[RMDB]
RNA sequence: GGGAACGACUCGAGUAGAGUCGAAAACGAAGUGGUUUACGAUGCCUGUCCGCGAUCCUUUGCCGGUGGGGUAUGGUGGCCACGCACUCCUCUUGGAGGAGUUGCCAUCGAAGGAUGUCCUCCACCGAUGUCCUAACGAAUUCGUUCGUUAGGACAUAAAAGAAACAACAACAACAAC
Reactivity to DMS in 0.01 (KOAc 150mM, MgCl2 10mM, bicine 150mM(pH8.5), 24C), signal-to-noise 5, nucleotides 027 to 126: c090g010a070a080g020u000g000g010u000u000u020a080c080g010a080u000g010c030c010u000g000u000c030c040g010c070g000a090u010c080c090u000u010u010g020c200c020g010g020u000g020g010g000g020u000a050u000g010g050u000g010g010c020c150a030c070g000c110a100c000u000c000c010u000c110u000u010g030g010a000g000g000a090g010u000u000g000c020c030a010u000c020g010a190a100g000g000a080u010g000u000c070c010u000c020c020a050c050c030g000
Reactivity to 2A3 in 0.01 (KOAc 150mM, MgCl2 10mM, bicine 150mM(pH8.5), 24C), signal-to-noise 5, nucleotides 027 to 126: c040g050a110a030g060u080g100g050u070u120u260a060c050g020a040u100g030c000c000u040g050u030c010c010g030c040g050a130u150c000c070u150u130u170g100c070c020g020g000u070g040g040g010g010u020a050u100g050g020u000g020g000c000c000a000c010g000c010a030c000u000c020c010u120c110u120u270g080g010a000g010g000a010g000u010u050g020c010c000a030u020c010g040a100a030g160g040a050u120g070u080c000c020u020c000c010a030c020c000g020